Chemical mapping of a 207-nucleotide RNA with 2A3.
Source: RMDB library ARCHII, as collected in RNAgym.
Conditions: 150 mM KOAc, 10 mM MgCl2 and 150 mM bicine (pH 8.5), 24 C.
RNA sequence: GGGAACGACUCGAGUAGAGUCGAAAAGAUCGGGUGUCCACACUAAGUUCGGCAUCAAUAUGGUGACCUCCCGGGAGCGGGGGACCACCGGAUUGCCUAAGGAGGGGUGAACCGGCCCAGGUCAGAAAAAGAGCAGGUCAAAACUCCCAUGCUGAUCGAACUUACUGAUGUUCGCAUCAGUAAGUUCAAAAGAAACAACAACAACAAC
Reactivity to 2A3 in 0.01 (KOAc 150mM, MgCl2 10mM, bicine 150mM(pH8.5), 24C), signal-to-noise 2, nucleotides 027 to 156: g040a030u030c040g000g000g020u050g040u080c030c010a020c000a000c030u070a050a070g100u060u090c030g000g000c000a000u030c030a070a130u210a110u240g000g000u010g040a090c000c000u000c000c040c020g030g040g020a080g090c060g010g000g020g020g000a040c130c000a000c000c000g010g010a070u050u150g030c000c010u010a050a000g060g010a010g000g070g000g020u010g020a040a000c000c030g020g000c030c020c020a010g000g010u000c020a000g130a070a080a020a070a010g060a000g000c060a010g050g030u070c070a010a010a070a200c040u030c020c000c000a050u070g020c010u050g030a080u090c070